[RMDB]
RNA sequence: GGGAACGACUCGAGUAGAGUCGAAAAGGGACGCCUUUAGAAGAAGAGGCUAGGUGGUAUUCCGGUGUGGGAUACUUGGUAAUAUGUAACGCUAAUUGCAUAAGAUUGUUGGACGGAAUUUACAGUCAAAACGGUCCUGCGUUCGCGCAGGACCGAACUAGUGAGGUAACUUCGGUUACCUCACUAGAAAAGAAACAACAACAACAAC
Reactivity to 2A3 in 0.01 (KOAc 150mM, MgCl2 10mM, bicine 150mM(pH8.5), 24C), signal-to-noise 2, nucleotides 027 to 156: g050g010g020a010c050g000c010c030u080u090u100a230g050a220a000g020a020a010g020a040g020g010c040u030a010g060g000u040g030g000u070a030u110u040c020c060g080g100u170g000u110g040g000g000a010u060a060c040u050u110g030g030u120a060a050u030a080u110g000u020a060a000c050g020c180u070a050a170u080u040g020c030a060u040a100a010g080a300u060u010g000u000u030g000g060a040c040g000g000a040a000u040u140u130a190c080a020g030u040c050a000a080a050a100c030g030g000u000c000c000u000g000c000g000u010u040c200g000c000g000c080a000g000g000a000c000c000g000a000a000

An RNA of 207 nucleotides, treated with 2A3 and read out base by base. For 2A3, 970 sequencing reads were counted. 2A3 adducts were read by reverse transcription with SuperScript II with manganese. The data come from the RNA Mapping Database (RMDB), library M2RFPK. The RNA was probed in 150 mM KOAc, 10 mM MgCl2 and 150 mM bicine (pH 8.5) at 24 C. High 2A3 reactivity points to a flexible backbone, as in loops and unpaired stretches. Values cover nucleotides 27 to 156.